Conditions: 150 mM KOAc, 10 mM MgCl2 and 150 mM bicine (pH 8.5), 24 C. The record gives the reactivity of an RNA of 207 nucleotides to DMS and 2A3. For DMS the reverse transcriptase was MarathonRT.
RNA sequence: GGGAACGACUCGAGUAGAGUCGAAAAGUUCACUUUCGAGUGAACAAAAAAUCCUAAGUCGUUCGAUGAGUCCACCAGCUCGAGGAUCUAUCGGAAACGAUAGGGAGAGCUGUGUGGACGAGAACGAUAUGGAAAAAAAACGAGGUUCGCCUCGUAAACUAUGAGAUAGGUUCGCCUAUCUCAUAGUAAAAGAAACAACAACAACAAC
Reactivity to DMS in 0.01 (KOAc 150mM, MgCl2 10mM, bicine 150mM(pH8.5), 24C), signal-to-noise 2, nucleotides 027 to 156: g010u010u000c010a000c010u000u000u010c190g000a040g030u000g010a030a010c000a000a020a050a080a040a160u000c010c000u000a090a300g010u000c010g010u010u000c010g040a210u010g020a240g010u020c000c010a020c000c000a040g000c010u000c000g010a110g030g000a060u000c010u000a010u000c000g030g000a150a100a300c010g000a020u010a020g010g000g010a060g000a030g020c020u000g010u010g030u010g010g030a010c010g010a050g010a020a020c030g020a010u000a150u010g000g000a000a000a010a130a060a060a100a070c000g000a040g020g000u000u000c200g010c020c010u000c000g030u000a010a100
Reactivity to 2A3 in 0.01 (KOAc 150mM, MgCl2 10mM, bicine 150mM(pH8.5), 24C), signal-to-noise 4, nucleotides 027 to 156: g000u000u000c000a000c000u060u110u080c060g000a020g020u000g000a000a000c000a020a000a000a020a010a060u050c040c010u070a130a030g030u000c010g000u000u000c030g090a270u190g140a130g040u010c000c000a000c000c000a000g000c000u000c020g030a270g020g000a000u000c000u010a000u000c000g030g030a110a050a050c020g000a010u000a000g000g000g010a010g000a000g000c020u000g110u140g000u000g040g000a000c000g000a000g000a000a000c000g000a000u000a020u050g000g070a040a020a030a000a000a060a000a020c000g020a010g030g010u080u110c200g110c060c000u000c000g000u010a060a020